[RMDB]
RNA sequence: GGGAACGACUCGAGUAGAGUCGAAAACUCGAGAUGAGAGUGAAGCUCGCGAAGAAGGCUCUUGAGGAACGUGUACUCAUCGCUCCUCUCUCGGGACUCCUCGUGGAUUUUGCGGUGAAGCCAGGGGACUCUGGCAUCAUUUCGAUGAUGCCAGAGUAAAAGAAACAACAACAACAAC
Reactivity to DMS in 0.01 (KOAc 150mM, MgCl2 10mM, bicine 150mM(pH8.5), 24C), signal-to-noise 3, nucleotides 027 to 126: c020u000c010g010a060g000a100u010g010a050g010a120g000u010g010a110a060g020c060u020c020g050c080g000a100a110g020a080a090g010g000c020u000c070u000u010g000a030g030g000a020a030c060g020u000g000u010a120c220u000c130a090u010c000g000c010u000c030c030u000c020u040c100u000c060g010g010g010a110c060u000c030c010u000c070g000u010g000g000a140u010u000u000u020g000c050g000g000u020g010a070a110g010c030c030a040g000g010g000g030
Reactivity to 2A3 in 0.01 (KOAc 150mM, MgCl2 10mM, bicine 150mM(pH8.5), 24C), signal-to-noise 2, nucleotides 027 to 126: c000u000c010g020a010g020a050u160g020a030g010a010g030u040g030a060a010g050c030u070c060g040c060g030a060a080g080a040a030g120g030c010u050c000u110u150g030a050g020g000a050a040c060g080u080g050u150a140c050u030c130a070u080c010g000c000u000c000c020u020c000u080c000u010c000g000g040g040a080c030u000c020c010u010c030g050u060g050g040a100u050u070u100u150g030c030g000g030u010g060a080a000g040c020c010a010g020g000g010g000
Source: RMDB library OK2TST, as collected in RNAgym. The record gives the reactivity of an RNA of 177 nucleotides to DMS and 2A3. Conditions: 150 mM KOAc, 10 mM MgCl2 and 150 mM bicine (pH 8.5), 24 C.